The record gives the reactivity of an RNA of 207 nucleotides to DMS and 2A3. Conditions: 150 mM KOAc, 10 mM MgCl2 and 150 mM bicine (pH 8.5), 24 C. It was measured as part of the RMDB library M2RFPK.
RNA sequence: GGGAACGACUCGAGUAGAGUCGAAAAGCUUAAUAACCUGCGCUGAGCCCUUCUCCCCCAGCUUGCCUGUGUCCUAGGGAAUCGGAAGGUCAUCCUUCACAGGAUCGUGUGGAAGUCCUGCUCGGGGUCCAAACAUGGUAAUUCGUUACCAUGUUAAAUCUGUCACUAUAUUCGUAUAGUGACAGAUAAAAGAAACAACAACAACAAC
Reactivity to DMS in 0.01 (KOAc 150mM, MgCl2 10mM, bicine 150mM(pH8.5), 24C), signal-to-noise 3, nucleotides 027 to 156: g030c040u000u000a070a130u010a050a140c020c020u000g010c030g020c050u010g000a100g000c020c010c030u000u000c040u000c010c000c010c020c020a100g040c050u000u000g020c040c030u030g020u010g000u000c040c030u000a150g030g040g020a100a080u000c040g000g010a110a080g010g020u000c100a100u000c010c000u000u000c040a080c040a080g010g000a050u000c060g000u000g010u010g020g010a120a100g000u000c020c010u000g010c030u020c050g000g010g040g020u020c050c010a080a050a030c000a010u000g010g020u000a010a100u000u010c280g030u020u000a000c000c000a020u000g000u000u000a030a100
Reactivity to 2A3 in 0.01 (KOAc 150mM, MgCl2 10mM, bicine 150mM(pH8.5), 24C), signal-to-noise 1, nucleotides 027 to 156: g010c030u110u100a120a030u060a180a150c030c060u060g010c080g000c060u100g070a060g020c010c010c000u080u030c070u050c010c020c000c000c010a000g000c020u010u060g040c020c000u050g020u020g030u130c020c030u050a020g050g000g000a040a030u070c030g030g020a020a020g010g030u090c010a090u150c020c010u050u040c040a040c000a020g050g050a040u060c040g030u060g010u040g100g010a000a050g010u020c020c010u000g020c000u000c030g040g000g000g010u010c000c020a050a000a000c010a000u000g000g010u010a020a020u070u010c040g010u020u000a000c000c000a000u000g000u000u010a000a020